[RMDB]
RNA sequence: GGGAACGACUCGAGUAGAGUCGAAAAAUGACCUUCCAAGUUUUUAAAAGAAUACGAUGAUAUUAUUUGCGUUUCAAAUCGAACAAUUCUUCUCGGAGCGAUCUGAGGUUUUAAUGGAGAUAGCGGUCAAGGUUAGUGAAUUCGUUCACUAACCUUGAAAAGAAACAACAACAACAAC
Reactivity to 2A3 in 0.01 (KOAc 150mM, MgCl2 10mM, bicine 150mM(pH8.5), 24C), signal-to-noise 3, nucleotides 027 to 126: a000u060g070a010c010c020u010u040c020c020a110a100g000u000u000u050u160u270a110a110a000a040g090a030a000u130a060c050g000a050u090g050a040u040a090u270u130a090u080u110u200g130c040g040u040u030u090c100a110a120a090u050c000g000a060a040c010a100a020u080u010c050u080u000c010u000c010g040g000a030g040c030g060a040u010c000u010g030a040g020g000u010u030u080u160a100a090u160g000g000a060g040a070u110a030g210c110g070g010u000
Reactivity to DMS in 0.01 (KOAc 150mM, MgCl2 10mM, bicine 150mM(pH8.5), 24C), signal-to-noise 2, nucleotides 027 to 126: a120u000g030a080c070c000u000u010c010c010a100a170g000u000u000u000u020u000a040a140a190a110g000a040a030u030a100c030g000a060u000g020a090u030a090u010u030a100u010u010u000g020c180g000u000u000u000c110a060a120a070u010c130g000a110a120c080a060a130u000u000c010u000u000c000u020c000g010g010a070g000c250g010a080u000c000u000g000a100g020g000u000u010u000u000a040a080u020g000g000a110g020a060u000a030g020c050g010g000u000

Overview: This 177-nucleotide RNA was probed chemically with 2A3 and DMS. The data come from the RNA Mapping Database (RMDB), libraries RFM100 and RFMREP. Reactivities are given for positions 27 through 126. For 2A3 the reverse transcriptase was SuperScript II with manganese. The reactions ran in a buffer of 150 mM KOAc, 10 mM MgCl2 and 150 mM bicine (pH 8.5), at 24 C.